[RMDB]
Conditions: 150 mM KOAc, 10 mM MgCl2 and 150 mM bicine (pH 8.5), 24 C.
An RNA of 207 nucleotides, treated with 2A3 and read out base by base.

RNA sequence: GGGAACGACUCGAGUAGAGUCGAAAACUGGCCCUGCCUCUAUUUAUUGCAUUCUGGUUCUGGCCGCGCCGCGUUGCUGGGGUAAGGGCAAGCACUGGGGUCAAGAGCCUGCACACAUGAGCCUUCCGGGCUGGAAGGCUGGCGUAGGACUUGGGGCGAGGACUAUGAGAUUCGUCUCAUAGUCCUCAAAAGAAACAACAACAACAAC
Reactivity to 2A3 in 0.01 (KOAc 150mM, MgCl2 10mM, bicine 150mM(pH8.5), 24C), signal-to-noise 2, nucleotides 027 to 156: c040u050g110g000c000c010c010u010g010c050c000u000c020u070a220u160u190u060a160u160u200g030c060a050u100u070c030u150g000g000u050u000c010u020g050g000c050c010g030c010g020c030c030g030c070g070u090u060g010c040u030g010g020g000g010u070a080a110g060g000g010c000a010a000g010c010a010c060u100g010g000g000g060u020c030a040a040g020a010g060c010c030u060g020c050a010c010a010c020a090u150g100a000g000c000c000u020u000c030c020g070g150g030c110u130g040g000a000a000g020g000c000u000g000g000c060g010u030a020g010g020a030c030u030u050g000g000g050g020c040
The 2A3 profile rests on 1,585 reads.
The data come from the RNA Mapping Database (RMDB), library OK3TST.